[RMDB]
RNA sequence: GGGAACGACUCGAGUAGAGUCGAAAAACCUAUGGAUUCGUCCAUAGGUGCUGGCGCGCGGCCUUUGUCCUGUCGCGUGUGCGUGGAGGGCGAUAUACGCGCAAUAGUGACAAUUCGUUGUCACUAAGCGUUGUAUAUUGUUCGCAAUAUACAACGCAAAAGAAACAACAACAACAAC
Reactivity to 2A3 in 0.01 (KOAc 150mM, MgCl2 10mM, bicine 150mM(pH8.5), 24C), signal-to-noise 6, nucleotides 027 to 126: a010c000c000u000a000u000g010g000a010u020u090c180g030u010c070c010a000u000a000g010g010u020g040c080u050g050g070c040g000c000g000c010g050g020c010c000u040u060u080g050u020c020c010u120g090u190c010g000c020g060u160g150u190g130c010g010u060g040g080a040g020g010g000c020g000a000u010a010u000a070c010g010c000g000c010a020a080u090a030g000u000g000a000c000a000a020u040u060c220g090u090u010g000u000c000a000c000u010a090a050
Reactivity to DMS in 0.01 (KOAc 150mM, MgCl2 10mM, bicine 150mM(pH8.5), 24C), signal-to-noise 7, nucleotides 027 to 126: a020c000c000u000a010u000g010g000a010u000u010c180g020u000c000c000a000u000a000g010g010u000g000c090u000g010g010c070g010c010g010c020g000g010c040c110u000u000u000g010u000c050c040u000g010u000c010g010c010g020u000g020u010g020c040g030u010g010g000a200g000g000g000c010g010a030u000a150u000a040c010g000c010g010c020a110a120u000a000g010u000g010a010c000a010a040u000u010c170g010u000u000g010u000c000a010c000u010a020a130